[RMDB]
RNA sequence: GGGAACGACUCGAGUAGAGUCGAAAAGCACGUCCGGGAAGGCCCGUGCGAACACUUGAGCUCCGGCUUGUCCGCUCUUGUGGAUUAGGACGUUCUAGCUCCGGCUUGGCCGCUAGUUCGUCCGAAAACUACGAGGGCAUUUCGAUGCCCUCGUAGUAAAAGAAACAACAACAACAAC
Reactivity to DMS in 0.01 (KOAc 150mM, MgCl2 10mM, bicine 150mM(pH8.5), 24C), signal-to-noise 2, nucleotides 027 to 126: g020c020a050c000g030u010c060c030g010g000g010a120a100g000g050c250c150c020g060u000g010c010g000a170a060c050a020c050u020u010g000a000g000c070u040c160c030g000g000c070u000u000g000u000c060c000g000c010u020c000u000u020g000u000g030g010a100u000u010a120g000g000a000c030g000u010u000c000u000a000g000c000u020c130c090g000g000c150u060u020g050g000c130c090g080c000u000a020g010u020u000c000g050u000c000c000g000a020a010a180
Reactivity to 2A3 in 0.01 (KOAc 150mM, MgCl2 10mM, bicine 150mM(pH8.5), 24C), signal-to-noise 2, nucleotides 027 to 126: g000c020a020c000g000u000c010c000g000g040g020a100a060g060g030c020c070c000g000u030g000c000g020a020a020c030a000c010u000u030g040a000g000c010u110c110c000g010g000c030u090u080g010u040c010c000g000c020u000c010u020u000g000u000g000g000a020u020u160a050g010g020a000c000g000u000u000c000u000a000g000c000u030c030c020g050g030c050u080u110g100g040c040c020g000c040u000a000g020u000u030c000g000u000c000c000g000a000a000a000

An RNA of 177 nucleotides, treated with DMS and 2A3 and read out base by base. For DMS the reverse transcriptase was MarathonRT. The 2A3 profile rests on 1,594 reads. The data come from the RNA Mapping Database (RMDB), library OK1LIB. Conditions: 150 mM KOAc, 10 mM MgCl2 and 150 mM bicine (pH 8.5), 24 C. For DMS, 2,358 sequencing reads were counted.